[RMDB]
Overview: An RNA of 177 nucleotides, treated with 2A3 and DMS and read out base by base. For 2A3 the reverse transcriptase was SuperScript II with manganese. Conditions: 150 mM KOAc, 10 mM MgCl2 and 150 mM bicine (pH 8.5), 24 C. The DMS profile rests on 15,112 reads. For 2A3, 27,416 sequencing reads were counted.
RNA sequence: GGGAACGACUCGAGUAGAGUCGAAAAGAUAUGGAGAUGUUGUGGGACGACGAAGAACGCUUUCGGAAACGAAAGCGGGAGUCGCCCACAUCAUCUCCUAAGUCAAAGACCAUAGUUCGCUAUGGUCCGAUAAGGAUACCUUCGGGUAUCCUUAUCGAAAAGAAACAACAACAACAAC
Reactivity to 2A3 in 0.01 (KOAc 150mM, MgCl2 10mM, bicine 150mM(pH8.5), 24C), signal-to-noise 5, nucleotides 027 to 126: g030a020u080a040u220g000g000a010g000a010u000g000u030u010g010u020g020g100g120a300c010g000a000c000g090a240a100g010a090a010c010g000c000u000u000u000c000g030g030a100a090a060c010g000a020a000a000g000c020g010g000g000a010g000u000c010g010c000c000c010a000c000a000u000c000a000u000c000u000c000c000u000a010a000g020u020c020a040a070a060g010a000c000c000a000u000a000g050u060u100c300g000c210u010a010u020g000g000u000c030
Reactivity to DMS in 0.01 (KOAc 150mM, MgCl2 10mM, bicine 150mM(pH8.5), 24C), signal-to-noise 8, nucleotides 027 to 126: g000a050u000a300u010g010g000a010g010a000u000g010u000u000g040u000g000g000g000a160c010g030a020c000g000a120a180g000a120a220c010g000c000u000u000u010c000g020g000a120a110a230c010g010a010a010a000g010c000g000g010g000a060g010u000c010g000c010c000c000a000c000a000u000c000a010u000c000u000c000c000u000a000a070g000u010c050a110a120a180g000a010c000c000a010u000a010g010u000u010c300g020c010u000a000u000g000g010u000c010